[RMDB]
RNA sequence: GGGAACGACUCGAGUAGAGUCGAAAAAUCCCGACCUAUCUGCUUUCUAUGUUAAGGAUGGUAAAUACUUUACAAGUGAACCACCCGUAACAUAUUCACCAGCUACAAUUUUAGCUGGUAGUGUCUAGUGCGGGCAACUUCGGUUGCCCGAAAAGAAACAACAACAACAAC
Reactivity to DMS in 0.01 (KOAc 150mM, MgCl2 10mM, bicine 150mM(pH8.5), 24C), signal-to-noise 3, nucleotides 027 to 129: a060u010c020c040c020g010a070c060c050u010a000u050c000u020g030c040u030u010u090c120u030a030u020g010u020u020a040a060g070g000a020u040g000g020u010a050a150a090u040a020c000u000u010u070a070c250a140a100g000u020g010a040a000c000c010a020c010c010c000g000u000a010a040c040a040u020a050u030u010c080a050c030c030a030g040c000u020a000c300a090a100u130u040u020u000a010g020c000u000g050g050u000a020g050u070g000u060c080u090a070g040u000g030
Reactivity to 2A3 in 0.01 (KOAc 150mM, MgCl2 10mM, bicine 150mM(pH8.5), 24C), signal-to-noise 3, nucleotides 027 to 129: a000u010c000c000c000g020a050c000c030u080a060u140c010u040g060c020u030u180u000c010u060a010u010g000u050u010a070a010g000g000a010u000g010g000u030a010a270a000u110a010c020u020u090u070a040c050a110a040g000u010g040a030a010c000c000a000c000c000c000g000u010a000a000c010a000u020a050u060u180c040a020c030c000a000g040c010u030a050c070a240a240u130u090u000u020a030g000c000u000g030g010u010a000g020u020g010u000c010u070a010g040u090g060